[RMDB]
RNA sequence: GGGAACGACUCGAGUAGAGUCGAAAAGAUAUGGACAGUCAUAGCAGCUGUGUGCUUUUGACGUGGUCGCUCGGAAACGAGCGGGAGCCACGAUAAGCAUUGCAGCUGCUAUGACUGUCCUAAGUCAGUGUAUCAAUCAGUUCGCUGAUUGAUACACAAAAGAAACAACAACAACAAC
Reactivity to DMS in 0.01 (KOAc 150mM, MgCl2 10mM, bicine 150mM(pH8.5), 24C), signal-to-noise 2, nucleotides 027 to 126: g000a060u000a300u010g000g030a000c000a030g000u000c010a000u000a010g020c000a030g030c000u000g000u000g040u000g000c000u000u010u000u000g000a230c150g020u000g000g010u010c010g040c000u000c000g020g000a130a110a230c000g010a030g000c000g010g000g040a290g010c010c000a020c000g000a090u000a020a010g010c000a000u000u010g040c000a020g010c010u000g020c000u000a000u000g000a010c010u000g010u010c000c010u000a020a080g000u000c050a190

Source: RMDB library TTRINS, as collected in RNAgym. Chemical mapping of a 177-nucleotide RNA with DMS. Values cover nucleotides 27 to 126. The DMS profile rests on 2,214 reads. The RNA was probed in 150 mM KOAc, 10 mM MgCl2 and 150 mM bicine (pH 8.5) at 24 C.